[RMDB]
RNA sequence: GGGAACGACUCGAGUAGAGUCGAAAAGAUAUGGAAUCUUUACCUCAACAGCAUUGGUCGGAAACGACCAAUGACAUGAGGCUAAAGGAUUCCUAAGUCAAAACAAGAGGAGUUCGCUCCUCUUGAACUAUCUCCAUCCCUUCGGGGAUGGAGAUAGAAAAGAAACAACAACAACAAC
Reactivity to DMS in 0.01 (KOAc 150mM, MgCl2 10mM, bicine 150mM(pH8.5), 24C), signal-to-noise 1, nucleotides 027 to 126: g010a020u000a300u020g000g000a000a010u000c000u000u000u000a030c010c000u000c000a000a120c280a250g010c000a010u000u000g010g030u000c000g000g010a070a020a300c030g000a010c010c010a030a000u000g030a000c080a250u000g000a070g000g000c200u000a080a000a020g020g020a020u000u000c000c000u010a000a090g030u000c060a080a210a260a230c000a000a010g000a020g000g000a000g030u000u000c300g000c000u030c000c020u000c000u010u000g000a090a280

This 177-nucleotide RNA was probed chemically with DMS. The DMS profile rests on 670 reads. The reactions ran in a buffer of 150 mM KOAc, 10 mM MgCl2 and 150 mM bicine (pH 8.5), at 24 C. DMS adducts were read by reverse transcription with MarathonRT. Source: RMDB library TTRDES, as collected in RNAgym.